[RMDB]
RNA sequence: GGGAACGACUCGAGUAGAGUCGAAAACGGUGCACAAUCAUAACUCCCUUCUUCUUCAACGUCCCAGGCUCAAGUGAUCCCCUUACCUCAGCCUCCCUAGUAGCUGGAAUCACUGGCAUGCACCACAGUCGAUAAUUACCUUCGGGUAAUUAUCGACAAAAGAAACAACAACAACAAC
Reactivity to DMS in 0.01 (KOAc 150mM, MgCl2 10mM, bicine 150mM(pH8.5), 24C), signal-to-noise 2, nucleotides 027 to 126: c100g030g020u000g010c020a080c130a050a040u020c070a030u030a160a240c080u000c010c000c020u010u010c040u000u010c040u000u000c060a050a190c100g010u010c010c020c000a090g020g020c020u010c060a080a030g000u000g010a110u010c040c030c020c060u000u000a100c030c020u020c060a050g000c030c040u000c000c000c010u000a050g020u000a060g020c030u000g000g010a050a070u010c060a020c040u000g020g010c090a080u000g000c100a050c010c000a060c140a080
Background: An RNA of 177 nucleotides, treated with DMS and read out base by base. Conditions: 150 mM KOAc, 10 mM MgCl2 and 150 mM bicine (pH 8.5), 24 C. The DMS profile rests on 1,341 reads.